[RMDB]
RNA sequence: GGGAACGACUCGAGUAGAGUCGAAAAGAUAUGGAUAUGGUAUACUUCGUUGAUCUUAAUCGGAAACGAUUAAGGGAGAAGUACCACGUAUCCUAAGUCAAAACAACCUUAGUUCGCUAAGGUUGAAGAUAUAUUUAAACUUCGGUUUAAAUAUAUCAAAAGAAACAACAACAACAAC
Reactivity to DMS in 0.01 (KOAc 150mM, MgCl2 10mM, bicine 150mM(pH8.5), 24C), signal-to-noise 6, nucleotides 027 to 126: g000a060u000a300u000g000g000a000u000a040u010g000g010u000a290u010a020c020u000u000c000g010u010u030g010a030u010c010u000u000a000a000u010c000g000g000a140a070a200c000g020a010u000u000a010a000g010g000g000a000g000a020a010g000u000a010c050c080a070c280g010u010a020u000c000c000u010a080a170g020u000c040a110a100a140a280c020a010a010c000c000u000u000a010g010u000u020c290g020c000u000a010a010g000g010u000u000g000a060a100
Reactivity to 2A3 in 0.01 (KOAc 150mM, MgCl2 10mM, bicine 150mM(pH8.5), 24C), signal-to-noise 5, nucleotides 027 to 126: g020a020u050a030u110g010g010a010u020a030u080g070g020u080a100u030a240c050u010u010c040g280u280u010g000a010u000c000u000u000a000a000u000c000g030g010a080a050a020c000g000a000u000u010a000a000g000g000g000a020g010a010a020g000u000a000c000c010a050c080g020u020a010u010c000c000u020a140a020g040u020c030a000a040a140a260c000a000a020c000c000u000u000a020g030u090u090c300g020c200u010a000a000g000g000u010u000g000a010a000